This 177-nucleotide RNA was probed chemically with 2A3 and DMS.
High 2A3 reactivity points to a flexible backbone, as in loops and unpaired stretches.
Reactivities are given for positions 27 through 126.
The reactions ran in a buffer of 150 mM KOAc, 10 mM MgCl2 and 150 mM bicine (pH 8.5), at 24 C.
The 2A3 profile rests on 657 reads.
RNA sequence: GGGAACGACUCGAGUAGAGUCGAAAAGGUGGUGAACCUUGGUUCGUGGGGAAAGAUGUGGCAGAGGUGUUGGGAUAUGCCGAAACUGCCAACAUAAGAAAACUUUUAGACGAGGCGGAUUACAAAGGAUCAGACCGAGAUUCGUCUCGGUCUGAUCAAAAGAAACAACAACAACAAC
Reactivity to 2A3 in 0.01 (KOAc 150mM, MgCl2 10mM, bicine 150mM(pH8.5), 24C), signal-to-noise 1, nucleotides 027 to 126: g000g020u020g000g000u070g030a060a000c000c000u030u160g020g000u020u090c090g000u050g000g000g030g080a020a200a000g000a040u040g000u020g050g000c000a000g030a040g000g040u090g020u050u040g050g060g000a070u000a050u110g000c000c000g040a010a040a000c100u020g000c010c010a130a040c200a090u120a050a000g070a050a090a010a080c010u120u090u050u050a010g000a000c120g000a020g010g000c020g020g000a000u100u090a100c100a040a140a020g030
Reactivity to DMS in 0.01 (KOAc 150mM, MgCl2 10mM, bicine 150mM(pH8.5), 24C), signal-to-noise 2, nucleotides 027 to 126: g000g020u000g000g030u040g000a150a020c000c000u010u010g010g020u020u000c050g020u000g010g000g030g000a080a030a020g050a060u060g000u000g030g000c040a040g010a120g010g050u000g030u000u030g000g060g000a190u000a020u040g010c000c040g010a050a100a250c000u020g010c000c020a010a090c160a050u000a070a090g000a140a070a070a110c060u000u010u010u000a130g070a080c060g000a080g000g000c030g000g000a080u000u000a020c190a060a190a070g000